[RMDB]
RNA sequence: GGGAACGACUCGAGUAGAGUCGAAAAGAUAUGGAACUCGAGUGGACAUGAUAUCACUUCGGAAACGAAGUAGAUAUCAACAGCCACUUCGAGUUCCUAAGUCAAAAGUUCUACUUCGGUAGAACAAGUAACUAGCGUAGUUCGCUACGCUAGUUACAAAAGAAACAACAACAACAAC
Reactivity to DMS in 0.01 (KOAc 150mM, MgCl2 10mM, bicine 150mM(pH8.5), 24C), signal-to-noise 2, nucleotides 027 to 126: g000a050u000a300u010g000g000a010a000c000u000c000g010a060g030u000g000g000a070c160a300u000g010a010u010a000u010c000a010c000u010u010c000g010g000a150a120a200c010g000a000a010g010u000a070g000a030u000a010u010c010a000a090c300a130g000c000c000a020c000u000u020c020g010a020g010u000u000c000c000u000a010a050g020u000c060a100a080a100a180g010u000u000c010u000a020c000u020u030c170g050g010u000a010g000a000a010c000a010a060
Reactivity to 2A3 in 0.01 (KOAc 150mM, MgCl2 10mM, bicine 150mM(pH8.5), 24C), signal-to-noise 1, nucleotides 027 to 126: g010a000u030a020u120g000g000a000a000c010u000c000g000a010g000u040g000g020a080c100a240u250g010a010u000a000u000c000a000c010u000u020c000g000g040a060a070a000c000g000a000a020g060u120a080g020a000u010a000u010c010a000a000c020a010g060c000c000a020c000u050u090c010g020a000g000u010u000c000c000u000a000a000g000u000c010a000a000a060a240g020u020u000c000u000a020c000u020u060c300g160g000u010a020g020a010a040c000a000a040

Structure probing data (DMS and 2A3) for a 177-nucleotide construct. The RNA was probed in 150 mM KOAc, 10 mM MgCl2 and 150 mM bicine (pH 8.5) at 24 C. For 2A3 the reverse transcriptase was SuperScript II with manganese.